[RMDB]
RNA sequence: GGGAACGACUCGAGUAGAGUCGAAAAUGUUACAGAUACCAUUUGAGCAUGUAUCUCAAGAGAAUUCACUGACUACUUGAUGAAAAGUGCCAUGUUAUACUCUUUAAAGACAAUCUACCUACACCAUACACUGAUGAAAUCAUAAAUGAAGUCUGUAAUUGAGACACGGUUUCGACCGUGUCUCAAUAAAAGAAACAACAACAACAAC
Reactivity to 2A3 in 0.01 (KOAc 150mM, MgCl2 10mM, bicine 150mM(pH8.5), 24C), signal-to-noise 2, nucleotides 027 to 156: u040g000u020u010a040c020a010g010a020u050a100c070c000a100u030u050u060g060a110g020c040a020u090g000u140a020u000c000u000c030a020a010g010a000g000a190a190u270u160c100a040c130u190g110a040c010u290a090c000u090u030g020a090u160g000a100a070a000a000g000u010g050c000c000a010u040g020u020u070a090u040a180c100u060c000u010u010u160a110a030a000g030a040c070a000a050u020c000u050a030c010c020u120a060c070a030c070c000a020u120a170c120a030c130u100g010a030u050g000a130a120a050u040c050a000u030a140a140a080u150g060a070a010g070u000c000u050g050u180a100